Chemical mapping of a 207-nucleotide RNA with DMS and 2A3.
The DMS profile rests on 2,697 reads.
[RMDB]
RNA sequence: GGGAACGACUCGAGUAGAGUCGAAAACCGGGGUUCGCCCCGGACACACGAUAUGGAGCAGCGUAGAGAGCUUGGAUUUACGUAGUGGUCGGAAACGACCAUGAAGUUGUCAGCUCUCUGAUCUGCUCCUAAGUCAUCUAUAGGUCUUCGGACCUAACAACACCGUAAUUUUCGAAUUACGGUGUUGAAAAGAAACAACAACAACAAC
Reactivity to DMS in 0.01 (KOAc 150mM, MgCl2 10mM, bicine 150mM(pH8.5), 24C), signal-to-noise 2, nucleotides 027 to 156: c020c000g000g000g000g020u000u000c160g040c000c000c010c000g000g020a120c040a040c020a140c130g000a130u000a300u000g030g010a030g020c000a050g000c160g000u000a090g010a060g000a000g020c030u000u000g020g030a030u000u000u000a020c020g000u000a300g050u000g010g000u020c000g010g010a150a160a300c040g030a050c000c000a010u000g000a150a300g010u000u000g000u010c020a070g010c010u000c010u000c010u000g010a030u010c000u010g000c000u000c010c000u000a000a070g010u010c040a120u020c040u010a210u000a000g030g000u000c000u000u020c300g050g000a000c000c000u050a000a060
Reactivity to 2A3 in 0.01 (KOAc 150mM, MgCl2 10mM, bicine 150mM(pH8.5), 24C), signal-to-noise 4, nucleotides 027 to 156: c010c000g000g000g000g000u090u130c260g160c000c000c010c010g010g000a010c020a000c000a020c070g060a060u040a050u270g000g000a010g020c000a010g000c050g100u180a000g000a000g000a000g000c060u140u120g150g030a060u240u300u070a000c000g010u030a000g000u010g010g000u010c000g020g000a070a090a090c010g000a000c010c000a000u010g000a050a000g000u000u010g000u000c000a000g000c000u000c000u000c000u020g000a010u000c000u000g010c000u000c000c000u000a000a000g000u000c000a010u020c030u110a120u070a120g040g000u010c000u020u050c170g120g000a000c000c000u010a010a020
The reactions ran in a buffer of 150 mM KOAc, 10 mM MgCl2 and 150 mM bicine (pH 8.5), at 24 C. It was measured as part of the RMDB library RNAMAK.